Record summary:
This 177-nucleotide RNA was probed chemically with DMS and 2A3. Conditions: 150 mM KOAc, 10 mM MgCl2 and 150 mM bicine (pH 8.5), 24 C. Reactivities are given for positions 27 through 126.
RNA sequence: GGGAACGACUCGAGUAGAGUCGAAAAGUGCAGAGUGAAAUUCAUAGGUGCAACGCCAAUCUGGCGGAACGACCCGGUACUCCGCGGAGUCGCGCUGUAAACGUUCUGUGUUGGCGUUCAGGCCUCACGAUCCAUCCUGAUUCGUCAGGAUGGAUCGAAAAGAAACAACAACAACAAC
Reactivity to DMS in 0.01 (KOAc 150mM, MgCl2 10mM, bicine 150mM(pH8.5), 24C), signal-to-noise 3, nucleotides 027 to 126: g010u020g000c100a070g000a140g000u010g000a110a080a030u010u020c120a130u020a030g010g020u030g000c120a030a000c020g020c000c000a020a030u020c220u000g020g020c000g010g000a040a010c010g010a120c050c100c030g000g010u010a050c020u010c240c020g010c150g000g020a100g000u010c180g020c070g000c130u000g000u000a070a120a180c040g000u010u010c000u000g000u000g060u000u000g000g000c020g020u000u010c070a110g030g000c010c010u020c080a160
Reactivity to 2A3 in 0.01 (KOAc 150mM, MgCl2 10mM, bicine 150mM(pH8.5), 24C), signal-to-noise 3, nucleotides 027 to 126: g140u120g010c120a040g110a060g090u050g070a070a070a180u090u060c050a080u130a060g060g000u060g040c060a010a000c010g000c010c000a000a030u040c110u190g190g020c020g020g010a000a000c000g080a030c020c030c040g010g030u020a050c020u000c030c000g050c160g060g010a040g010u110c080g030c010g010c090u080g010u120a030a030a120c010g000u030u020c020u030g030u060g000u050u000g000g010c030g030u010u000c020a030g090g000c000c000u000c020a050
As a SHAPE reagent, 2A3 marks flexible, mostly unpaired nucleotides at the ribose 2'-OH. Source: RMDB library OK1LIB, as collected in RNAgym.